The data come from the RNA Mapping Database (RMDB), library OK3TST. Chemical mapping of a 207-nucleotide RNA with 2A3. The reactions ran in a buffer of 150 mM KOAc, 10 mM MgCl2 and 150 mM bicine (pH 8.5), at 24 C. 2A3 adducts were read by reverse transcription with SuperScript II with manganese.
RNA sequence: GGGAACGACUCGAGUAGAGUCGAAAAGGAUGACUACUGGGGAGGUUCUUUGGAAGCAGAGGUCCUGUCCGAUUUGUACAAUCUGACAAUUCACUUCUGGGUUACAGAUGAUCAUCAGUGGAUACACCAUGUUCAAAGGUGGAAGAACAACGCACCACGCCAAAUUGAAUUUCGAUUCAAUUUGGCGAAAAGAAACAACAACAACAAC
Reactivity to 2A3 in 0.01 (KOAc 150mM, MgCl2 10mM, bicine 150mM(pH8.5), 24C), signal-to-noise 2, nucleotides 027 to 156: g070g000a110u070g040a020c040u040a040c070u140g060g000g000g000a070g000g070u170u050c080u060u050u080g030g060a070a050g030c030a010g020a000g000g010u030c000c000u000g020u000c020c000g020a000u020u000u120g240u110a080c080a030a010u000c000u030g000a010c010a030a190u130u100c000a070c020u040u000c020u050g140g000g020u030u110a020c020a000g040a070u060g000a030u060c010a010u000c000a080g030u010g010g010a040u070a090c040a030c020c020a040u090g140u160u090c090a130a030a040g040g010u020g020g010a040a050g020a060a040c020a040a000c100g050c090a020c000c000a020